Chemical mapping of a 177-nucleotide RNA with 2A3 and DMS.
For 2A3 the reverse transcriptase was SuperScript II with manganese.

[RMDB]
RNA sequence: GGGAACGACUCGAGUAGAGUCGAAAAGAUAUGGACUUAAAGGGAGAGUCUCGGAAACGAGGGAACUCUUUGAUCUUUCAAGUCCUAAGUCAAAACCGUAUACCGGACUUCGGUCCGGUAUACGGAAGUAUCGGAGUAUGUUCGCAUACUCCGAUACAAAAGAAACAACAACAACAAC
Reactivity to 2A3 in 0.01 (KOAc 150mM, MgCl2 10mM, bicine 150mM(pH8.5), 24C), signal-to-noise 2, nucleotides 027 to 126: g030a000u080a030u160g000g000a000c000u020u010a010a010a000g040g050g010a020g000a000g040u010c010u000c000g020g060a090a060a030c020g000a020g050g050g070a160a040c010u000c000u140u130u050g050a040u010c020u030u030u090c140a010a010g010u010c000c000u000a110a010g050u030c020a000a010a120a110c010c010g000u000a000u000a010c000c000g030g000a010c020u060u110c300g070g000u000c000c010g000g020u000a000u000a000c020g000g000a000a000
Reactivity to DMS in 0.01 (KOAc 150mM, MgCl2 10mM, bicine 150mM(pH8.5), 24C), signal-to-noise 2, nucleotides 027 to 126: g000a050u000a300u010g010g000a010c010u000u010a010a010a030g000g000g010a010g020a020g000u000c000u000c000g000g000a100a070a170c020g000a020g000g000g010a150a060c000u000c000u000u000u020g010a100u010c000u010u000u000c280a000a020g000u000c000c010u000a070a120g010u000c050a090a120a090a130c000c000g000u000a000u000a010c000c000g000g000a020c010u000u010c260g020g000u000c000c000g030g000u000a000u000a000c000g000g000a010a030